[RMDB]
RNA sequence: GGGAACGACUCGAGUAGAGUCGAAAACCACAACUACCGGCACUGCUUCAUCCCUUAGCUCGCACUCUUCAGCAGCGCUCCGUGCAGCGCUUGAGGGUCGUGUUGUGGAUGUUCACCAACGUUUUUUCGGUAUAUCACGAUUCGUCGUGAUAUACCGAAAAGAAACAACAACAACAAC
Reactivity to 2A3 in 0.01 (KOAc 150mM, MgCl2 10mM, bicine 150mM(pH8.5), 24C), signal-to-noise 4, nucleotides 027 to 126: c010c010a030c010a070a040c040u150a090c020c010g040g000c020a030c060u050g050c030u100u040c010a040u030c000c000c000u040u070a020g030c010u010c040g000c030a020c040u020c020u130u150c030a100g020c040a010g000c090g000c020u000c060c080g180u220g080c170a000g000c000g000c020u010u010g010a030g010g030g000u000c030g010u030g010u030u060g030u080g000g020a020u070g050u040u040c130a190c120c010a100a120c080g020u030u020u000u000u020u000
An RNA of 177 nucleotides, treated with 2A3 and read out base by base. Values cover nucleotides 27 to 126. Conditions: 150 mM KOAc, 10 mM MgCl2 and 150 mM bicine (pH 8.5), 24 C. For 2A3 the reverse transcriptase was SuperScript II with manganese. The 2A3 profile rests on 2,480 reads. The data come from the RNA Mapping Database (RMDB), library OK1LIB.